[RMDB]
Chemical mapping of a 207-nucleotide RNA with DMS and 2A3. The reactions ran in a buffer of 150 mM KOAc, 10 mM MgCl2 and 150 mM bicine (pH 8.5), at 24 C. The 2A3 profile rests on 1,304 reads. 2A3 adducts were read by reverse transcription with SuperScript II with manganese. Reactivities are given for positions 27 through 156. The data come from the RNA Mapping Database (RMDB), library OK3TST. The DMS profile rests on 4,638 reads.

RNA sequence: GGGAACGACUCGAGUAGAGUCGAAAAGCAGACCUCCCUGCCGGUGCUGCGGGAGUCGUAGGAGACCAGUCGCCCGAUCGGGCGGAACGCGGAACCGUCGAAGGUCUCCGGGUAGGCCGUGUUCCAGUACUCGUGCACGUCGACGACCGUGUCGGCGACAAGCCACCAAAUUCGUUUGGUGGCUUGUAAAAGAAACAACAACAACAAC
Reactivity to DMS in 0.01 (KOAc 150mM, MgCl2 10mM, bicine 150mM(pH8.5), 24C), signal-to-noise 2, nucleotides 027 to 156: g000c010a160g010a100c030c010u020c010c010c010u000g000c000c030g020g000u000g020c050u030g050c020g000g020g000a130g010u000c030g020u000a180g020g000a100g010a040c010c020a230g040u010c010g050c000c000c000g000a150u030c080g030g040g000c030g040g000a000a020c030g020c020g030g010a080a120c040c020g000u010c070g000a150a110g010g000u000c000u000c010c000g000g040g020u000a080g010g000c010c020g010u010g020u000u000c030c020a190g010u000a080c050u000c060g000u010g000c050a150c030g020u010c010g020a060c020g000a160c080c090g010u000g020u000c020g010g000c010g000
Reactivity to 2A3 in 0.01 (KOAc 150mM, MgCl2 10mM, bicine 150mM(pH8.5), 24C), signal-to-noise 2, nucleotides 027 to 156: g070c040a000g030a170c020c020u030c040c000c010u030g010c030c000g120g000u080g050c110u090g000c070g020g040g020a030g030u040c020g010u030a050g000g020a020g010a000c000c030a020g030u010c030g010c050c030c000g060a260u300c150g000g000g030c010g010g010a030a000c030g000c000g010g040a070a110c040c000g040u100c050g070a090a020g000g010u000c000u000c040c010g000g000g020u140a080g000g070c020c000g010u020g010u070u060c010c020a010g000u030a050c030u030c070g130u100g030c060a010c050g020u050c000g010a020c000g050a090c020c020g040u100g010u070c000g000g000c000g000